Source: RMDB library OK1LIB, as collected in RNAgym. The record gives the reactivity of an RNA of 177 nucleotides to 2A3 and DMS. The 2A3 profile rests on 44,708 reads. The RNA was probed in 150 mM KOAc, 10 mM MgCl2 and 150 mM bicine (pH 8.5) at 24 C. Reactivities are given for positions 27 through 126. The DMS profile rests on 46,024 reads. 2A3 adducts were read by reverse transcription with SuperScript II with manganese.
RNA sequence: GGGAACGACUCGAGUAGAGUCGAAAAUAAGAGAGAAUGCCACAACAGAAAGCAACGCGCAGUGAAAUCAGGAUUAAGGACUGGCAGCCGGCGGCAGCUCCAGGCCGGUUCCGGCAUAUACGCCAAAGUCGAGUCUGUGCUUCGGUGCAGAUUCGACAAAAGAAACAACAACAACAAC
Reactivity to 2A3 in 0.01 (KOAc 150mM, MgCl2 10mM, bicine 150mM(pH8.5), 24C), signal-to-noise 9, nucleotides 027 to 126: u170a030a010g090a000g010a000g030a060a040u060g020c010c010a040c030a130a050c010a050g100a070a110a020g050c030a030a050c050g030c010g000c050a010g020u040g110a060a040a050u090c030a030g050g010a030u090u090a090a050g060g020a020c020u010g020g000c010a010g010c000c010g010g030c000g010g000c010a030g020c030u030c020c010a030g050g000c010c000g000g000u150u050c020c000g000g000c000a020u070a010u020a100c080g010c010c000a040a040a000
Reactivity to DMS in 0.01 (KOAc 150mM, MgCl2 10mM, bicine 150mM(pH8.5), 24C), signal-to-noise 9, nucleotides 027 to 126: u030a100a100g000a120g010a070g010a040a040u000g000c030c020a060c060a110a060c080a080g000a090a080a100g010c090a060a060c110g000c050g010c030a040g000u010g000a050a090a090u020c070a050g000g000a080u010u010a070a100g010g010a050c050u010g000g010c040a090g010c010c000g000g020c020g000g010c010a080g010c060u010c040c060a070g000g000c000c010g000g020u020u030c020c010g000g000c020a070u020a080u020a070c140g000c010c020a060a080a100